The record gives the reactivity of an RNA of 177 nucleotides to 2A3 and DMS. The reactions ran in a buffer of 150 mM KOAc, 10 mM MgCl2 and 150 mM bicine (pH 8.5), at 24 C. The data come from the RNA Mapping Database (RMDB), library OK1LIB. The DMS profile rests on 9,202 reads.
RNA sequence: GGGAACGACUCGAGUAGAGUCGAAAAGGUCAUCGAUUAACGUGGCGAUCCAUGGGCAUCGUCGGCGUCGGGAUCGACCUCGUCUCCAUUCCUGAUUUCGCCGAGCAGGUCGAUCAACCGGGAACGGCCCCAUUAAAAUCUUCGGAUUUUAAUGGGGAAAAGAAACAACAACAACAAC
Reactivity to 2A3 in 0.01 (KOAc 150mM, MgCl2 10mM, bicine 150mM(pH8.5), 24C), signal-to-noise 9, nucleotides 027 to 126: g030g010u060c030a060u080c090g130a130u120u130a080a040c030g010u030g010g000c010g000a010u000c030c060a240u190g080g040g000c080a020u020c010g040u010c020g050g030c020g020u080c030g050g030g020a010u020c030g010a020c000c000u020c040g090u040c000u000c020c020a110u070u090c010c020u100g110a220u050u100u100c100g030c060c010g020a020g040c060a020g010g000u040c010g000a000u020c030a020a080c000c000g030g010g020a040a030c020g090g000
Reactivity to DMS in 0.01 (KOAc 150mM, MgCl2 10mM, bicine 150mM(pH8.5), 24C), signal-to-noise 4, nucleotides 027 to 126: g000g010u000c030a050u020c060g000a140u020u030a090a050c020g020u000g000g010c060g000a010u010c020c030a210u000g000g010g060c140a040u000c010g030u000c030g000g020c030g000u000c060g010g000g010a010u000c030g020a010c000c000u000c140g040u030c020u000c010c170a180u010u000c010c020u000g000a120u020u020u010c040g030c040c060g010a090g020c120a080g000g010u000c040g000a010u010c050a090a060c030c030g030g000g000a110a070c090g010g000